[RMDB]
RNA sequence: GGGAACGACUCGAGUAGAGUCGAAAAGUGUCUUACCGUUGCGAUAUCGGUGCGAAUGCGCGUUCACAACAGCGCUGCACACGCGCUUUUCGCCGGUGUGGCGGUUCAGUUGGCUUCCUACCCCAACCCUGAUCGGCGAUUUCGAUCGCCGAUCAGGAAAAGAAACAACAACAACAAC
Reactivity to 2A3 in 0.01 (KOAc 150mM, MgCl2 10mM, bicine 150mM(pH8.5), 24C), signal-to-noise 1, nucleotides 027 to 126: g080u030g040u070c010u080u040a050c000c000g090u000u050g060c090g070a030u000a000u100c000g030g000u020g130c100g070a080a010u140g070c000g000c000g000u090u060c110a020c010a190a100c030a120g130c070g020c030u040g000c000a030c000a010c030g030c030g000c000u000u000u000u030c040g040c010c000g010g000u050g000u000g000g000c000g010g020u030u080c010a030g000u030u070g030g010c020u040u030c000c070u100a110c000c000c000c000a000a120c000